[RMDB]
RNA sequence: GGGAACGACUCGAGUAGAGUCGAAAAGAAAGAGCCUGAAUACGGAGAACCGUAACGCAUGACCGAAUAUUCAGCCCAGUUCACGACGUAAGUCGUGCGCCCGAGUCUUAGUCUGGGCGCUGGGGUCACGUACAUGCGUCAGGCAGGAUUAAGAGAACCUAGUAGCAGUAUUCGUACUGCUACUAGGAAAAGAAACAACAACAACAAC
Reactivity to 2A3 in 0.01 (KOAc 150mM, MgCl2 10mM, bicine 150mM(pH8.5), 24C), signal-to-noise 3, nucleotides 027 to 156: g090a010a050a010g100a000g000c020c010u060g060a080a060u050a040c000g000g010a100g140a270a210c000c000g020u020a020a000c020g000c000a000u010g000a010c030c090g060a160a080u170a130u240u170c050a100g000c010c000c000a010g050u140u170c000a000c000g000a000c020g020u090a120a040g010u000c010g010u000g030c000g000c000c010c030g080a020g060u020c050u150u100a100g020u030c040u120g010g000g000c000g010c000u010g000g000g000g000u050c050a020c070g000u050a090c010a000u000g000c010g010u020c000a000g000g000c000a000g070g010a050u140u210a070a010g040a030g020a050a020
Reactivity to DMS in 0.01 (KOAc 150mM, MgCl2 10mM, bicine 150mM(pH8.5), 24C), signal-to-noise 2, nucleotides 027 to 156: g000a170a100a110g020a150g010c000c000u010g020a140a180u010a050c010g030g050a160g020a120a210c030c010g040u000a090a250c030g020c020a030u000g000a160c050c010g010a120a090u010a230u000u000c100a110g000c030c000c000a050g000u020u010c040a010c000g000a000c000g000u010a140a220g020u000c010g050u000g020c020g030c000c010c000g030a060g020u000c140u000u000a120g020u010c020u010g020g010g030c000g070c010u010g010g030g020g010u000c040a030c060g010u000a070c040a020u000g030c030g010u000c020a050g000g060c000a040g000g010a160u000u000a050a130g000a250g020a240a220